An RNA of 177 nucleotides, treated with DMS and 2A3 and read out base by base. Source: RMDB library M2PK50, as collected in RNAgym. DMS adducts were read by reverse transcription with MarathonRT. The RNA was probed in 150 mM KOAc, 10 mM MgCl2 and 150 mM bicine (pH 8.5) at 24 C.
RNA sequence: GGGAACGACUCGAGUAGAGUCGAAAAGAACGCCACUUCGGUGGCGUUCGAAGAACUACCACACGUAGAUCACUAUCGUGUGAGACAUCGAUAGAUGUCAAAUGGUCCGGAAGUUCGCUUCCGGAAAUCUGAGCGAAGUAUUCGUACUUCGCUCAGAAAAAGAAACAACAACAACAAC
Reactivity to DMS in 0.01 (KOAc 150mM, MgCl2 10mM, bicine 150mM(pH8.5), 24C), signal-to-noise 2, nucleotides 027 to 126: g010a020a010c000g060c000c020a000c010u000u010c300g080g010u000g000g020c000g010u000u000c000g010a050a040g000a180a090c110u010a110c190c000a060c000a020c000g020u010a040g000a270u010c290a140c030u000a040u010c010g050u000g000u000g000a220g000a010c010a000u000c010g010a140u020a080g010a000u000g010u000c000a060a040a090u030g030g000u000c030c000g010g020a020a020g010u000u010c300g000c000u000u000c000c000g010g000a000a000a060
Reactivity to 2A3 in 0.01 (KOAc 150mM, MgCl2 10mM, bicine 150mM(pH8.5), 24C), signal-to-noise 1, nucleotides 027 to 126: g000a020a000c000g020c010c010a000c010u030u060c180g060g000u000g000g000c000g010u000u000c000g010a030a020g010a050a030c050u050a060c030c030a010c000a010c000g010u010a030g100a230u150c050a030c300u070a030u300c080g000u020g000u010g010a060g030a010c010a000u000c000g070a020u100a300g000a000u020g020u000c000a020a000a120u150g010g050u000c000c010g000g000a000a000g000u070u080c190g010c160u000u000c010c000g000g000a030a000a000